[RMDB]
RNA sequence: GGGAACGACUCGAGUAGAGUCGAAAACUUCUUCCAUAGUCACUAUUAUAAAACUUCGGGUCUUAUUCUCAUAUGCCCCCGCAAGCGAGGGCCUGGUCGAUUAGUGAGACCAGGUGCGACGCGGGGGGCAAGUACAACUCUUCGGAGUUGUACUUGCAAAAGAAACAACAACAACAAC
Reactivity to 2A3 in 0.01 (KOAc 150mM, MgCl2 10mM, bicine 150mM(pH8.5), 24C), signal-to-noise 3, nucleotides 027 to 126: c000u080u060c020u120u010c030c010a100u090a070g050u060c020a010c100u050a070u300u050a160u200a230a160a120a100c040u140u090c040g000g070g000u000c010u070u130a090u100u000c030u000c030a010u220a070u300g090c020c000c000c010c000g010c020a050a070g050c020g050a030g050g140g030c000c000u000g000g020u000c010g060a100u040u160a110g140u090g130a030g000a010c010c000a000g000g020u010g000c000g000a010c030g010c010g000g000g010g010g000
Reactivity to DMS in 0.01 (KOAc 150mM, MgCl2 10mM, bicine 150mM(pH8.5), 24C), signal-to-noise 2, nucleotides 027 to 126: c080u000u000c050u000u000c050c060a090u010a080g000u000c020a060c090u000a090u010u010a080u010a100a100a120a110c070u000u000c010g010g010g000u000c030u000u010a130u000u000c010u000c020a130u010a140u000g000c020c010c000c000c000g030c020a110a230g010c050g010a120g010g020g020c010c000u000g020g020u000c020g010a210u000u000a100g020u000g000a210g020a020c000c000a000g000g030u000g010c010g000a110c170g000c020g000g000g010g000g000
Structure probing data (2A3 and DMS) for a 177-nucleotide construct. Source: RMDB library RFMREP, as collected in RNAgym. The reactions ran in a buffer of 150 mM KOAc, 10 mM MgCl2 and 150 mM bicine (pH 8.5), at 24 C. 2A3 adducts were read by reverse transcription with SuperScript II with manganese.